[RMDB]
This 207-nucleotide RNA was probed chemically with DMS and 2A3. For DMS the reverse transcriptase was MarathonRT. The DMS profile rests on 2,036 reads.
RNA sequence: GGGAACGACUCGAGUAGAGUCGAAAACCUCACUACAUUUUACUGUUCCUAAAGAAUUUGUGACAGGUACAGUAAAACGUAUUGCAAGGUUUAUCAGUUCCUAUAAAAAGGUAAAUAACAAUAUAUGAAAAGCAAAGACUGUUCGCAGUCUUUGCAACAGUACAAGACUGUUCGCAGUCUUGUACUGAAAAGAAACAACAACAACAAC
Reactivity to DMS in 0.01 (KOAc 150mM, MgCl2 10mM, bicine 150mM(pH8.5), 24C), signal-to-noise 1, nucleotides 027 to 156: c000c000u000c020a100c050u010a000c010a030u000u000u000u000a010c010u000g000u000u000c010c010u000a120a190a150g020a250a150u010u000u000g040u000g020a170c260a080g000g010u000a010c000a030g020u000a040a000a020a030c010g000u000a010u000u000g030c030a130a040g010g030u000u000u000a070u000c070a160g000u000u000c000c000u000a130u020a080a060a090a140a080g020g020u010a110a090a060u000a100a170c050a050a120u010a190u000a150u000g010a130a100a070a110g000c000a020a040a010g000a040c000u000g010u010u010c290g030c040a040g000u000c000u000u000u000g040c010a040a090
Reactivity to 2A3 in 0.01 (KOAc 150mM, MgCl2 10mM, bicine 150mM(pH8.5), 24C), signal-to-noise 5, nucleotides 027 to 156: c000c000u000c010a010c010u010a000c000a030u000u010u000u000a010c010u000g010u060u110c010c020u110a110a150a080g150a270a300u230u260u210g170u120g070a070c070a080g010g000u020a000c000a000g000u000a000a000a000a000c010g000u000a000u010u020g010c080a060a050g040g020u010u030u030a190u100c010a020g000u000u010c000c000u040a050u190a090a080a010a020a010g060g010u110a100a140a090u170a150a020c020a080a050u100a050u070a050u300g070a070a130a010a020g000c000a000a000a000g000a000c000u010g030u060u080c190g000c090a000g000u000c000u000u000u000g000c000a000a000